[RMDB]
RNA sequence: GGGAACGACUCGAGUAGAGUCGAAAAGUGCCGGAGCGGUAGUCACAUAGAUUAGAAUACCUGCAUAUCACGCAAGAGGACGCGAGUCAGCGUCACGGCCGAGCAGAAGAGUGAUAGUGACUAUCAGAAAUAUAUUUAUAUUCGUAUAAAUAUAUUUAAAAGAAACAACAACAACAAC
Reactivity to 2A3 in 0.01 (KOAc 150mM, MgCl2 10mM, bicine 150mM(pH8.5), 24C), signal-to-noise 1, nucleotides 027 to 126: g100u110g080c000c010g080g060a030g100c040g070g000u000a000g000u000c000a000c000a020u140a030g060a060u170u130a000g100a130a060u070a210c000c000u000g000c010a000u030a000u200c030a000c030g000c000a090a060g110a130g180g000a010c010g010c010g030a080g280u230c060a030g010c000g000u000c000a000c030g020g000c030c000g020a030g040c010a010g010a160a040g130a100g180u190g030a090u060a110g010u020g000a000c010u000a010u020c000a010g010
Reactivity to DMS in 0.01 (KOAc 150mM, MgCl2 10mM, bicine 150mM(pH8.5), 24C), signal-to-noise 2, nucleotides 027 to 126: g040u030g000c050c010g020g020a080g020c060g000g000u000a010g000u000c000a010c010a110u040a100g010a100u010u020a120g000a150a140u040a070c080c000u020g020c030a130u050a170u050c200a060c080g000c040a050a080g010a180g000g000a010c000g020c010g010a240g050u010c150a070g000c010g000u000c000a040c020g000g000c050c070g000a110g010c020a050g010a110a090g010a140g000u020g000a130u000a100g020u000g000a020c030u000a000u000c000a120g000
The record gives the reactivity of an RNA of 177 nucleotides to 2A3 and DMS. For 2A3 the reverse transcriptase was SuperScript II with manganese. As a SHAPE reagent, 2A3 marks flexible, mostly unpaired nucleotides at the ribose 2'-OH. Conditions: 150 mM KOAc, 10 mM MgCl2 and 150 mM bicine (pH 8.5), 24 C.